The record gives the reactivity of an RNA of 207 nucleotides to 2A3 and DMS. DMS adducts were read by reverse transcription with MarathonRT. For DMS, 1,996 sequencing reads were counted. The reactions ran in a buffer of 150 mM KOAc, 10 mM MgCl2 and 150 mM bicine (pH 8.5), at 24 C.
RNA sequence: GGGAACGACUCGAGUAGAGUCGAAAAGACGACAACUACGCUCUAGCUGCUUAAUGCGGCUAGCAGUCGCUAGGGGAUGCCUGUAAACCCGAAACGACUGUCAGAUAGAACAGGAUCGCCGCCAAGUUCGCUGUAGACGUAACGGCUAAAACUCAUACUACUUACUACCGUUCGCGGUAGUAAGUAGAAAAGAAACAACAACAACAAC
Reactivity to 2A3 in 0.01 (KOAc 150mM, MgCl2 10mM, bicine 150mM(pH8.5), 24C), signal-to-noise 4, nucleotides 027 to 156: g070a010c080g030a010c030a110a040c110u200a070c060g000c040u040c000u010a000g010c010u040g000c020u160u300a230a030u300g000c010g010g000c020u000a000g000c000a000g000u000c000g030c070u020a030g000g000g000g000a000u090g020c000c000u020g030u060a100a040a060c030c010c000g010a030a020a000c000g020a000c000u000g040u060c020a020g000a150u170a060g040a060a000c020a010g040g020a040u070c040g010c000c000g000c000c000a060a010g010u040u070c080g000c270u200g030u170a040g020a030c000g010u020a010a010c000g000g000c000u000a010a010a010a040c020u050c060a020u040a210
Reactivity to DMS in 0.01 (KOAc 150mM, MgCl2 10mM, bicine 150mM(pH8.5), 24C), signal-to-noise 1, nucleotides 027 to 156: g000a050c000g010a040c020a070a120c020u000a080c100g100c030u000c060u000a050g020c020u040g000c000u000u010a180a090u000g020c020g000g030c000u000a050g000c010a040g000u000c050g020c040u000a300g030g030g000g000a190u000g000c100c040u000g040u010a050a130a300c000c000c000g010a090a100a030c000g040a030c000u010g020u010c050a140g000a150u000a060g030a090a060c040a080g000g010a140u000c040g010c000c000g040c030c050a110a240g000u000u010c090g030c030u000g000u010a120g000a100c000g000u010a080a160c040g000g000c010u010a020a010a050a130c000u000c040a070u010a220